[RMDB]
RNA sequence: GGGAACGACUCGAGUAGAGUCGAAAAACGAAAACUACGCUUUAGCCGCUUAAUACGGCUAGCCUCUGCACCGAUGGGCCUUAACGUCGGGUCUGGCAACAGACAGCAGAGUCAUUAGCAAGGAUCGCGUUCUGUAGGGUCACUUUACAGAACGUUAGACAUGGGUAUAGUUCGCUAUACCCAUGUCAAAAGAAACAACAACAACAAC
Reactivity to DMS in 0.01 (KOAc 150mM, MgCl2 10mM, bicine 150mM(pH8.5), 24C), signal-to-noise 1, nucleotides 027 to 156: a070c080g010a070a010a130a040c040u000a060c030g040c000u000u000u000a040g000c000c040g040c030u000u000a220a180u010a000c000g000g000c000u000a040g000c170c000u000c020u000g020c000a300c000c010g000a060u020g000g010g020c100c080u000u000a070a110c040g010u000c030g070g000g040u020c010u010g010g040c280a200a200c000a020g000a050c030a130g030c040a020g010a070g000u000c110a080u000u010a040g000c010a100a080g000g010a130u000c110g000c000g000u000u000c000u000g000u000a050g000g000g050u020c120a110c010u020u010u000a040c000a020g010a050a020c000g010u010u000a050
Reactivity to 2A3 in 0.01 (KOAc 150mM, MgCl2 10mM, bicine 150mM(pH8.5), 24C), signal-to-noise 5, nucleotides 027 to 156: a000c070g050a060a030a010a010c090u180a060c060g010c020u120u120u080a010g000c020c000g030c080u110u190a090a030u190a230c000g000g000c000u000a000g000c010c000u000c000u000g000c000a010c030c000g000a000u020g000g050g120c050c050u150u140a120a030c010g000u010c000g030g000g000u010c000u000g010g000c040a060a030c000a070g010a000c000a000g010c000a000g000a000g020u020c010a100u120u180a010g020c040a030a030g050g010a030u070c050g000c000g010u010u000c000u000g000u010a010g030g040g080u240c120a100c300u080u080u010a000c000a000g000a000a010c000g000u010u010a010